[RMDB]
The data come from the RNA Mapping Database (RMDB), library OK1LIB. An RNA of 177 nucleotides, treated with 2A3 and read out base by base. For 2A3, 401 sequencing reads were counted.
RNA sequence: GGGAACGACUCGAGUAGAGUCGAAAAGCGAUCAUUAAUUCCGCCUAGGAUGCACAGCAGGCGGUGCCAAACGUACGGAUGCGGCCGACAAUCACUAUUACCCCGAAUGGGCGAGCCGAGCUCUCCAUGUUGCCUGGUACUUCGGUACCAGGCAACAAAAAGAAACAACAACAACAAC
Reactivity to 2A3 in 0.01 (KOAc 150mM, MgCl2 10mM, bicine 150mM(pH8.5), 24C), signal-to-noise 1, nucleotides 027 to 126: g150c120g040a040u040c000a090u260u260a090a040u230u040c000c000g040c020c010u040a050g070g070a010u250g000c040a000c030a140g040c000a000g020g000c000g070g040u110g050c000c110a020a000a000c080g050u160a000c000g010g010a110u180g000c000g020g000c040c040g020a000c060a010a060u040c030a000c060u110a070u110u120a100c050c030c000c020g130a100a010u050g150g000g000c030g060a060g000c010c140g000a040g000c080u040c000u010c040c000a020